[RMDB]
RNA sequence: GGGAACGACUCGAGUAGAGUCGAAAACCUCACUACAUUUUACUGUUCCUAAAGAAUUUGUGACAGGUACAGUAAAACGUAUUACAAGGUUUAUCAGUUCCUAUAAACAGGUAAAUAACAAUAUAUGAAAAGCAAAGACUGUUCGCAGUCUUUGCAACCCUGUACUGUCCUUCGGGACAGUACAGGGAAAAGAAACAACAACAACAAC
Reactivity to 2A3 in 0.01 (KOAc 150mM, MgCl2 10mM, bicine 150mM(pH8.5), 24C), signal-to-noise 2, nucleotides 027 to 156: c010c000u000c020a060c010u010a010c010a050u000u000u000u000a000c000u000g010u010u040c020c010u060a050a120a020g150a170a250u180u290u240g200u080g050a030c030a060g000g000u000a000c000a010g000u000a000a000a000a000c000g020u020a010u020u070a030c100a110a030g010g010u010u030u030a150u080c040a060g000u030u030c000c050u030a060u160a090a100a010c070a070g110g050u050a070a060a050u200a220a040c030a040a060u130a020u040a040u290g110a130a100a030a000g000c000a000a000a000g000a000c000u020g010u040u050c150g010c040a000g000u000c000u010u010u000g000c000a020a000
Chemical mapping of a 207-nucleotide RNA with 2A3.
For 2A3, 941 sequencing reads were counted.
Conditions: 150 mM KOAc, 10 mM MgCl2 and 150 mM bicine (pH 8.5), 24 C.